[RMDB]
RNA sequence: GGGAACGACUCGAGUAGAGUCGAAAAUGGGGCUGGAUGCGCGAAUGUUGGAUGAGUUGAAUCACGAUGAGCGAGCUUGGGAUGCUUUGGUUGAUGAGUUCGAUGGUUAUCGCCAACAUUGGCAGCGGCGCUGAGUAUAGUUCGCUAUACUCAGCGCAAAAGAAACAACAACAACAAC
Reactivity to DMS in 0.01 (KOAc 150mM, MgCl2 10mM, bicine 150mM(pH8.5), 24C), signal-to-noise 2, nucleotides 027 to 126: u020g010g030g000g030c060u040g000g030a110u010g030c080g020c030g010a030a050u010g020u000u000g000g010a060u010g020a100g040u010u010g000a140a060u000c040a160c110g010a070u000g020a110g040c040g020a050g000c060u000u010g010g010g010a150u010g000c050u010u000u010g010g000u010u010g010a130u010g030a080g020u010u000c060g000a070u000g020g030u010u000a120u020c080g000c030c010a010a040c080a060u000u000g030g040c050a100g000c060g030
Reactivity to 2A3 in 0.01 (KOAc 150mM, MgCl2 10mM, bicine 150mM(pH8.5), 24C), signal-to-noise 2, nucleotides 027 to 126: u110g000g000g000g020c020u050g070g000a100u140g060c040g010c020g080a050a060u070g000u030u040g080g070a140u060g040a110g120u110u040g120a070a040u040c020a010c040g090a070u150g030a000g100c050g000a030g000c010u050u080g100g000g030a060u100g010c030u090u060u080g110g010u080u100g050a160u020g020a010g090u030u010c040g040a070u120g020g050u040u040a060u090c020g010c010c000a000a030c010a080u010u070g070g030c040a040g040c020g080